Structure probing data (DMS and 2A3) for a 177-nucleotide construct. The RNA was probed in 150 mM KOAc, 10 mM MgCl2 and 150 mM bicine (pH 8.5) at 24 C. DMS adducts were read by reverse transcription with MarathonRT. For 2A3, 1,454 sequencing reads were counted. For 2A3 the reverse transcriptase was SuperScript II with manganese. High DMS reactivity at an A or C suggests that its Watson-Crick edge is free.
RNA sequence: GGGAACGACUCGAGUAGAGUCGAAAAUGGAGAUGGAAACAGAAAUACUGAAAACCCAAGCGGCUGGGAAUUGCCCCGUUCUUCCAGGUCAUCGUCGGCGGAAUGAUGUUGCCAUCAACUGCGGCAAAGAAAGGCUAUAGUUCGCUAUAGCCUUUCUAAAAGAAACAACAACAACAAC
Reactivity to DMS in 0.01 (KOAc 150mM, MgCl2 10mM, bicine 150mM(pH8.5), 24C), signal-to-noise 3, nucleotides 027 to 126: u000g000g000a100g000a030u000g010g000a070a070a090c050a030g010a090a090a080u040a120c040u000g000a070a050a130a170c030c020c000a140a150g000c100g000g010c060u000g000g000g010a010a070u020u020g020c030c020c010c000g000u010u000c030u030u000c040c060a050g010g000u000c040a040u010c090g020u020c070g020g000c030g010g010a070a070u020g000a100u000g000u000u010g020c040c010a070u000c060a040a150c060u010g000c070g020g000c060a050a060
Reactivity to 2A3 in 0.01 (KOAc 150mM, MgCl2 10mM, bicine 150mM(pH8.5), 24C), signal-to-noise 2, nucleotides 027 to 126: u100g020g000a070g010a060u050g050g000a070a020a030c030a020g060a090a120a010u170a130c050u070g020a020a030a060a070c000c010c020a020a010g070c010g090g000c030u020g000g000g090a090a090u100u130g010c010c000c000c010g020u030u040c020u050u010c000c000a030g060g000u060c030a090u040c100g070u010c020g040g020c030g020g020a060a010u030g020a040u060g010u070u070g040c030c000a020u030c020a020a040c030u060g040c020g060g000c020a070a000